[RMDB]
RNA sequence: GGGAACGACUCGAGUAGAGUCGAAAAGAUAUGGAUAGCGAAGAACUCGAGCCCGAAGAACUCGGAAACGAGGGAGGGUUCGAGGGAGCUAUCCUAAGUCAAAGCUAGCUCCUUCGGGAGCUAGCAAGAAGCAAGAAAAGUUCGCUUUUCUUGCUUCAAAAGAAACAACAACAACAAC
Reactivity to DMS in 0.01 (KOAc 150mM, MgCl2 10mM, bicine 150mM(pH8.5), 24C), signal-to-noise 3, nucleotides 027 to 126: g020a020u000a300u010g010g010a000u000a000g010c000g010a110a140g000a140a170c010u000c000g000a020g010c000c000c010g010a080a120g010a140a190c000u010c010g000g000a150a070a160c000g000a010g000g010g010a110g030g010g010u000u000c000g010a010g000g000g000a060g000c000u000a000u000c000c000u000a000a070g000u000c040a060a130a130g000c000u000a000g010c000u000c000c010u000u010c190g000g000g000a020g000c010u000a000g010c010a010a010
Chemical mapping of a 177-nucleotide RNA with DMS. For DMS the reverse transcriptase was MarathonRT. Conditions: 150 mM KOAc, 10 mM MgCl2 and 150 mM bicine (pH 8.5), 24 C.